[RMDB]
Conditions: 150 mM KOAc, 10 mM MgCl2 and 150 mM bicine (pH 8.5), 24 C.
The record gives the reactivity of an RNA of 207 nucleotides to 2A3 and DMS.
RNA sequence: GGGAACGACUCGAGUAGAGUCGAAAAAGAUCCACGCAACGGCGUGGAUCACACGUUCAUCCCUAUUGGGACGGAAGUAGGCAUAGUGCCGAAGGAACGCAUUAGUCAUGCGCUACGGCGCAUGACACACAUCAGAGUCACUUCGGUGACUCUGAAAUCUCAAAUAAUACUUCGGUAUUAUUUGAGAAAAAGAAACAACAACAACAAC
Reactivity to 2A3 in 0.01 (KOAc 150mM, MgCl2 10mM, bicine 150mM(pH8.5), 24C), signal-to-noise 7, nucleotides 027 to 156: a000g000a000u000c000c000a000c000g010c030a190a290c180g300g000c010g010u000g000g000a000u000c000a000c000a000c000g010u010u010c010a010u030c000c000c010u140a300u160u300g010g000g000a000c000g010g010a030a020g010u020a010g010g000c040a090u110a270g130u190g150c000c000g000a000a010g020g020a020a000c010g010c040a060u060u140a030g000u000c000a000u010g000c000g000c010u030a030c300g070g000c000g010c000a000u000g010a000c000a000c000a000c000a080u020c000a000g000a000g000u000c000a000c010u020u030c120g110g000u010g000a000c000u000c000u000g000a000a000a000
Reactivity to DMS in 0.01 (KOAc 150mM, MgCl2 10mM, bicine 150mM(pH8.5), 24C), signal-to-noise 2, nucleotides 027 to 156: a110g000a020u000c000c000a000c000g060c000a230a120c190g040g090c000g100u000g010g000a000u000c000a020c070a040c020g020u000u020c000a220u010c010c030c010u000a190u000u020g020g000g020a000c050g010g010a040a070g000u000a120g040g020c010a180u000a160g000u000g020c010c000g020a080a090g040g020a080a090c050g000c080a100u000u010a100g010u000c040a020u000g010c000g010c020u000a110c300g070g000c020g030c010a000u000g000a020c020a010c020a040c090a090u000c000a020g000a030g000u000c010a010c000u000u020c280g080g030u000g050a000c000u010c000u000g010a000a040a070
For 2A3, 6,417 sequencing reads were counted.
The DMS profile rests on 5,458 reads.
The data come from the RNA Mapping Database (RMDB), library M2RFPK.
Reactivities are given for positions 27 through 156.